Chemical mapping of a 207-nucleotide RNA with 2A3 and DMS. Values cover nucleotides 27 to 156. The reactions ran in a buffer of 150 mM KOAc, 10 mM MgCl2 and 150 mM bicine (pH 8.5), at 24 C.

RNA sequence: GGGAACGACUCGAGUAGAGUCGAAAAAUUCAUGGGCUGCAGAAUGGAUGCUGUGUUAGCAGGCCUGAAAACAACAUUCAUCUCCUUGUGCAUCUCCACCAGAACUCUUGGUUGACCAGGUGCAUUGUCAACGAGUAUAAUAUUUUGAAAGGAAUCACGUCCACUAUUAGUUCGCUAAUAGUGGACGAAAAGAAACAACAACAACAAC
Reactivity to 2A3 in 0.01 (KOAc 150mM, MgCl2 10mM, bicine 150mM(pH8.5), 24C), signal-to-noise 3, nucleotides 027 to 156: a000u090u070c020a040u080g020g000g020c020u020g010c040a000g030a270a080u090g040g020a040u050g020c030u030g010u010g000u100u040a040g040c050a030g010g130c020c010u050g080a090a080a000a000c100a010a000c000a020u040u130c030a030u010c030u000c020c010u020u030g020u030g000c030a040u000c020u010c010c010a020c020c000a020g010a200a210c030u050c030u200u090g040g000u020u050g030a040c020c050a040g030g020u050g020c020a020u050u130g030u080c010a020a020c030g010a000g080u090a020u010a060a090u030a050u050u210u080u130g160a120a060a010g050g080a020a040u240c180a010
Reactivity to DMS in 0.01 (KOAc 150mM, MgCl2 10mM, bicine 150mM(pH8.5), 24C), signal-to-noise 1, nucleotides 027 to 156: a130u000u000c030a130u000g050g020g110c000u010g000c100a120g000a160a100u000g020g000a010u000g020c010u000g060u030g020u000u010a090g010c060a130g040g000c060c030u020g030a070a030a080a050c000a030a030c040a040u000u010c010a060u000c050u000c000c040u000u000g010u000g000c010a070u000c030u010c000c030a010c040c040a080g000a090a070c080u010c040u000u000g040g000u010u000g000a060c060c110a150g030g030u040g040c000a090u000u010g010u000c020a040a090c060g020a020g010u030a160u010a100a090u000a150u000u000u000u000g000a060a080a090g010g000a070a120u000c090a130